[RMDB]
RNA sequence: GGGAACGACUCGAGUAGAGUCGAAAAAUUGGCAUUAGUAUGCGAGAUAAUAGAUACAUGCAAUGGUGUCAUACCAGACGUUUCACAUACUGCGUUAUUAUAUCUUUCUAUAAUCGCACAAUGAUAUACAUCAUGUAUAUCUGUACUAUCAUACGGCCUAUGCUCACAUAUUCGUAUGUGAGCAUAGAAAAGAAACAACAACAACAAC
Reactivity to DMS in 0.01 (KOAc 150mM, MgCl2 10mM, bicine 150mM(pH8.5), 24C), signal-to-noise 5, nucleotides 027 to 156: a100u010u000g030g010c050a160u000u000a070g010u000a020u000g020c030g010a100g010a120u000a070a120u000a080g010a120u010a050c070a090u010g020c060a100a100u000g030g040u000g010u010c110a090u000a110c010c030a100g000a140c170g010u020u000u000c050a060c070a080u000a050c050u000g020c070g020u010u000a050u010u000a050u000a090u000c070u010u000u000c060u010a070u000a030a050u010c040g000c020a030c060a050a110u000g020a020u000a010u000a010c010a200u000c130a110u000g030u010a030u000a020u000c010u000g030u000a060c040u010a040u000c030a060u000a050c040g010g030c130
Reactivity to 2A3 in 0.01 (KOAc 150mM, MgCl2 10mM, bicine 150mM(pH8.5), 24C), signal-to-noise 9, nucleotides 027 to 156: a000u120u100g040g000c020a030u050u080a060g020u030a030u030g030c080g020a020g030a040u170a150a040u050a140g050a020u050a040c030a020u030g020c040a030a090u040g010g020u040g010u060c030a020u050a130c030c040a040g050a090c070g030u060u180u160c140a100c030a090u130a080c070u040g010c000g050u080u100a030u080u020a040u020a030u080c080u040u220u000c060u030a020u020a020a030u070c000g000c010a010c050a050a090u080g010a000u010a000u040a060c040a050u300c030a070u200g010u020a050u010a010u060c000u010g000u020a040c020u040a040u100c020a020u020a060c030g020g000c000